Annotation:
Chemical mapping of a 177-nucleotide RNA with DMS and 2A3. It was measured as part of the RMDB library OK2TST. The reactions ran in a buffer of 150 mM KOAc, 10 mM MgCl2 and 150 mM bicine (pH 8.5), at 24 C. Values cover nucleotides 27 to 126.
RNA sequence: GGGAACGACUCGAGUAGAGUCGAAAACAAAAUUCUUCCUGUCGUUGCAGGACGAUCUGAUGCGCAUCUUCGGUUCCGACCGCAUGGACGGCAUGUUGCAGAAACUCGGCCUCAAGGAAGACGAAGACCAGUAGUGACGGUUCGCCGUCACUACUGGAAAAGAAACAACAACAACAAC
Reactivity to DMS in 0.01 (KOAc 150mM, MgCl2 10mM, bicine 150mM(pH8.5), 24C), signal-to-noise 1, nucleotides 027 to 126: c080a120a060a040a160u000u050c010u000u000c000c020u000g060u000c150g010u000u020g010c140a040g040g010a020c030g000a000u000c040u000g010a130u000g010c080g010c000a070u000c040u000u020c000g000g060u020u000c070c030g000a140c120c070g000c100a130u010g010g000a110c120g000g040c300a020u000g000u000u000g040c030a070g030a090a120a110c220u010c020g000g040c010c000u000c060a020a040g010g000a020a030g010a030c200g000a020a130g000a050
Reactivity to 2A3 in 0.01 (KOAc 150mM, MgCl2 10mM, bicine 150mM(pH8.5), 24C), signal-to-noise 1, nucleotides 027 to 126: c010a010a090a040a070u050u040c030u030u010c010c020u060g130u250c110g230u150u230g020c130a010g000g000a010c000g000a010u000c010u150g190a050u020g020c020g000c010a000u000c060u050u040c030g140g060u140u040c020c080g090a060c000c050g150c080a130u100g040g050a040c010g000g000c020a000u020g000u050u270g030c000a020g050a000a030a030c030u030c030g000g010c000c000u040c030a050a020g030g000a000a040g000a000c000g050a040a080g040a040